[RMDB]
RNA sequence: GGGAACGACUCGAGUAGAGUCGAAAAGGACUACCCGUCAGGGUUUGGGCCAUACGGACAGCCGGGUCCACUGCCGGAAAGAAAACAAAACAAAACAAAAACAAAACAAAACAAAAACAAAAGAAAACUCAGGUGAUAGUUUCGACUAUCACCUGAGAAAAGAAACAACAACAACAAC
Reactivity to 2A3 in 0.01 (KOAc 150mM, MgCl2 10mM, bicine 150mM(pH8.5), 24C), signal-to-noise 1, nucleotides 027 to 126: g010g040a050c020u000a040c070c000c000g010u030c050a060g040g120g020u140u150u140g030g080g000c000c000a010u070a110c040g000g040a030c020a040g140c000c000g020g020g020u000c010c000a010c040u050g010c010c000g030g010a030a050a010g080a000a120a030a010c060a000a080a000a010c080a000a130a000a000c100a140a130a080a030a000c060a020a080a020a010c080a010a050a030a010c060a000a090a040a000a000c020a030a040a020a000g080a010a000a020a000